Source: RMDB library 15KREP, as collected in RNAgym. Structure probing data (DMS and 2A3) for a 177-nucleotide construct. The 2A3 profile rests on 1,672 reads. 2A3 is a SHAPE reagent: it acylates the 2'-hydroxyl of flexible nucleotides of all four kinds. Values cover nucleotides 27 to 126. In probing experiments dimethyl sulfate is read out at A N1 and C N3, which are open when not base-paired. DMS adducts were read by reverse transcription with MarathonRT. Conditions: 150 mM KOAc, 10 mM MgCl2 and 150 mM bicine (pH 8.5), 24 C.
RNA sequence: GGGAACGACUCGAGUAGAGUCGAAAAAGAAGGCUGUUAAUAUAGCUAAAAACGCCUAUGAGAAGGAUAAGGCAGUGGCCCGUAAGUUAGAACGUAUGGCUGAUCAGGCUAUGACUUCUAUGUAUAAGGAUAUACUUAGGUUCGCCUAAGUAUAUCCAAAAGAAACAACAACAACAAC
Reactivity to DMS in 0.01 (KOAc 150mM, MgCl2 10mM, bicine 150mM(pH8.5), 24C), signal-to-noise 3, nucleotides 027 to 126: a090g000a140a150g010g000c010u000g000u000u000a100a090u010a110u010a050g010c020u000a020a070a070a170a050c120g020c010c010u000a050u000g010a130g000a110a060g010g010a080u010a050a090g020g010c000a080g040u000g010g010c020c010c010g020u000a080a100g010u000u000a020g000a040a030c140g020u000a030u000g010g000c000u000g010a150u010c300a140g000g000c010u000a050u000g000a030c040u000u000c020u000a030u000g010u010a090u010a070a120
Reactivity to 2A3 in 0.01 (KOAc 150mM, MgCl2 10mM, bicine 150mM(pH8.5), 24C), signal-to-noise 2, nucleotides 027 to 126: a010g080a040a030g030g000c030u020g020u080u010a210a040u150a100u060a160g000c000u050a000a060a060a020a050c070g010c020c000u040a080u130g110a110g030a110a050g050g000a020u070a100a080g030g000c050a040g030u030g060g030c000c000c020g030u040a030a020g070u020u020a010g020a040a000c020g000u050a020u050g040g000c000u010g020a290u180c080a010g020g000c010u010a010u060g100a040c000u000u000c030u020a030u040g100u020a160u030a240a060